RNA sequence: GGGAACGACUCGAGUAGAGUCGAAAAGAGCAGCGGCCAGCUCAUCGUCCGCACCACCAAUGACCUGCAACUGGUGCAGGCGUUGCUGUUCGAUGUGCCCAAUGUGCUCAGGCAUGUGCUGACACUGCCUUCCCUAGGCGUUCGCGCCUAGGGAAGGAAAAGAAACAACAACAACAAC
Reactivity to DMS in 0.01 (KOAc 150mM, MgCl2 10mM, bicine 150mM(pH8.5), 24C), signal-to-noise 1, nucleotides 027 to 126: g030a090g000c020a020g060c050g000g030c100c030a040g050c000u010c040a030u020c010g000u000c020c020g020c000a050c020c000a110c160c090a030a000u070g000a130c090c010u000g010c000a250a280c280u030g000g050u000g060c000a060g000g000c000g030u000u030g000c040u000g000u020u000c000g000a100u000g000u000g000c020c000c000a210a150u020g050u000g010c080u000c000a050g000g000c050a190u010g000u080g000c050u020g000a040c030a010c010u000g020
Reactivity to 2A3 in 0.01 (KOAc 150mM, MgCl2 10mM, bicine 150mM(pH8.5), 24C), signal-to-noise 3, nucleotides 027 to 126: g070a020g000c000a010g020c000g000g000c010c000a010g010c020u040c090a140u130c010g040u000c000c000g000c010a000c000c010a000c020c100a060a060u220g150a250c020c060u080g030c010a130a060c070u070g090g000u040g010c000a000g000g000c010g000u010u060g000c030u020g030u010u010c030g000a060u100g020u080g040c000c050c000a000a070u100g000u000g000c040u000c000a010g140g000c060a120u220g120u210g140c010u040g010a000c000a000c030u020g020
The data come from the RNA Mapping Database (RMDB), library OK1LIB. An RNA of 177 nucleotides, treated with DMS and 2A3 and read out base by base. The reactions ran in a buffer of 150 mM KOAc, 10 mM MgCl2 and 150 mM bicine (pH 8.5), at 24 C. For DMS the reverse transcriptase was MarathonRT. For DMS, 1,499 sequencing reads were counted.